The record gives the reactivity of an RNA of 207 nucleotides to 2A3. It was measured as part of the RMDB library VIROID. The 2A3 profile rests on 1,033 reads.

[RMDB]
RNA sequence: GGGAACGACUCGAGUAGAGUCGAAAACUCGACUUUUUUUCUUCCACUCACCCACUGCUCGAGAAUCUCUUCCCUUCCCUCGCGCCUCUUCUUCGAUUCGGAUCGGCUCAUCUCGACAAGAGGCGGCGGUCCUCAGUGCUCUUACUCUUUUCUGUAAGAUCCCUAUACACUUCGGUGUAUAGGGAUCAAAAGAAACAACAACAACAAC
Reactivity to 2A3 in 0.01 (KOAc 150mM, MgCl2 10mM, bicine 150mM(pH8.5), 24C), signal-to-noise 2, nucleotides 027 to 156: c050u030c050g010a050c040u000u090u060u000u160u210u260c110u200u050c100c060a140c080u150c060a090c000c070c010a050c070u030g000c010u000c000g020a010g130a200a270u010c020u010c050u040u020c020c010c000u010u030c030c000c000u020c040g060c010g000c010c000u010c000u000u050c010u020u040c030g060a100u100u060c040g020g110a090u010c040g080g070c020u030c040a070u020c010u040c030g060a080c090a120a000g000a000g030g000c000g010g020c020g030g000u060c020c000u040c040a010g040u030g060c000u000c000u090u120a140c040u040c000u040u100u040u000c000u000g070u020a120a030